RNA sequence: GGGAACGACUCGAGUAGAGUCGAAAACGAUGAGGGGAGAAGAGAAGUGGGCAGGUGGGUCGAAGACGCCCGCCCCAAGGCGUACGCCCGUCGCAUGUUUGCAUGCGGGGGUCAGACCCCCUUACCGAAUAGUAAUGCCUUUCGAGGCAUUACUAUUAAAAGAAACAACAACAACAAC
Reactivity to 2A3 in 0.01 (KOAc 150mM, MgCl2 10mM, bicine 150mM(pH8.5), 24C), signal-to-noise 3, nucleotides 027 to 126: c050g060a080u160g020a090g010g040g040g010a100g030a110a040g080a010g010a180a000g060u190g030g030g000c040a000g000g030u160g060g040g020u060c020g040a050a010g070a010c020g020c010c000c020g060c000c010c000c010a000a020g030g000c020g010u010a060c050g030c020c000c000g130u070c010g000c010a000u020g070u270u280u300g110c010a000u010g000c010g000g000g000g020g000u010c010a000g020a020c000c000c010c010c000u000u030a030c020c000g010
Reactivity to DMS in 0.01 (KOAc 150mM, MgCl2 10mM, bicine 150mM(pH8.5), 24C), signal-to-noise 4, nucleotides 027 to 126: c080g000a080u010g010a090g010g030g010g010a100g000a160a110g010a080g010a110a080g010u000g010g010g020c180a030g000g010u010g020g000g020u000c040g010a100a100g020a050c020g000c010c000c030g010c040c010c010c010a100a090g000g010c010g010u000a070c200g000c000c000c000g020u010c000g010c000a010u000g000u010u010u020g010c030a000u000g010c010g010g010g000g000g010u000c070a150g000a150c070c000c000c000c000u000u000a050c020c030g010
An RNA of 177 nucleotides, treated with 2A3 and DMS and read out base by base. Reactivities are given for positions 27 through 126. The reactions ran in a buffer of 150 mM KOAc, 10 mM MgCl2 and 150 mM bicine (pH 8.5), at 24 C. For 2A3 the reverse transcriptase was SuperScript II with manganese.